Conditions: 150 mM KOAc, 10 mM MgCl2 and 150 mM bicine (pH 8.5), 24 C.
This 177-nucleotide RNA was probed chemically with 2A3 and DMS.
Reactivities are given for positions 27 through 126.
The data come from the RNA Mapping Database (RMDB), library OK2TRN.
2A3 is a SHAPE reagent: it acylates the 2'-hydroxyl of flexible nucleotides of all four kinds.
Values are in units of 0.01, from 0 to 300, in steps of 10.
RNA sequence: GGGAACGACUCGAGUAGAGUCGAAAAGGCAACCUUUUUCGAAGGUGGAAAUGAGAUCCAACUGUACGUGAAUCGGGGAGAAAAAUUGGAUGUGCUGAGACAAUAUGUCUACAUGGGUCUUCAGGAGAUGUAUGUCACGGUUCGCCGUGACAUACAUAAAAGAAACAACAACAACAAC
Reactivity to 2A3 in 0.01 (KOAc 150mM, MgCl2 10mM, bicine 150mM(pH8.5), 24C), signal-to-noise 2, nucleotides 027 to 126: g060g040c030a020a100c000c010u030u070u010u080u120c130g050a040a020g040g020u060g000g090a060a100a040u220g040a040g030a060u010c000c010a020a010c080u040g020u130a060c050g070u040g100a020a020u080c010g020g000g010g000a080g090a040a110a020a050a040u150u120g070g000a030u050g020u050g080c030u060g020a020g000a010c020a060a160u130a100u300g070u030c030u010a060c030a080u040g010g070g000u010c000u040u090c060a040g040g040a100g020
Reactivity to DMS in 0.01 (KOAc 150mM, MgCl2 10mM, bicine 150mM(pH8.5), 24C), signal-to-noise 2, nucleotides 027 to 126: g000g020c060a190a030c000c010u000u000u010u010u010c110g000a050a050g020g040u000g020g000a040a080a090u000g010a060g000a060u000c010c020a010a150c060u000g000u010a080c060g000u020g000a070a090u010c070g010g010g010g000a110g000a060a040a030a050a150u000u000g020g000a050u000g010u010g010c020u000g010a080g020a040c050a100a120u000a050u010g000u000c040u020a030c070a080u020g010g010g010u000c020u000u000c070a090g000g000a070g010
The 2A3 profile rests on 1,618 reads.